An RNA of 177 nucleotides, treated with DMS and 2A3 and read out base by base. It was measured as part of the RMDB library TTRINS.

[RMDB]
RNA sequence: GGGAACGACUCGAGUAGAGUCGAAAAGAUAUGGAUUGUCUCUAGCGUGGCUGAUGACCAUGGAUAACCUAUUAUAUCGGAAACGAUAUAAUAGGGAAACCAUGCAAGGCUCGGGCAAUCCUAAGUCGGUCGUAUAAGAGUUCGCUCUUAUACGACCAAAAGAAACAACAACAACAAC
Reactivity to DMS in 0.01 (KOAc 150mM, MgCl2 10mM, bicine 150mM(pH8.5), 24C), signal-to-noise 1, nucleotides 027 to 126: g000a040u010a300u000g060g000a000u000u000g030u000c010u020c300u000a190g040c100g020u000g010g010c000u000g000a130u000g010a140c300c030a000u000g000g000a040u000a070a240c010c000u020a010u000u000a000u000a000u000c000g030g000a080a100a060c000g000a000u000a000u000a000a000u000a010g040g000g030a030a140a200c000c000a010u000g020c030a090a110g000g000c000u000c100g000g040g000c020a000a030u000c000c000u000a130a040g000u030c020
Reactivity to 2A3 in 0.01 (KOAc 150mM, MgCl2 10mM, bicine 150mM(pH8.5), 24C), signal-to-noise 1, nucleotides 027 to 126: g070a040u180a070u180g000g010a000u040u000g050u000c040u020c120u300a120g130c140g300u300g150g000c000u060g060a300u150g040a060c050c000a000u000g000g000a050u070a150a090c010c000u000a010u000u010a010u010a000u000c020g000g000a060a100a000c040g000a000u020a000u000a010a000u000a000g030g000g010a020a000a000c000c000a000u000g030c000a110a150g060g000c000u040c060g020g000g000c000a010a000u000c000c000u040a060a000g110u090c150

For DMS, 711 sequencing reads were counted. The 2A3 profile rests on 2,052 reads. Reactivities are given for positions 27 through 126. Conditions: 150 mM KOAc, 10 mM MgCl2 and 150 mM bicine (pH 8.5), 24 C.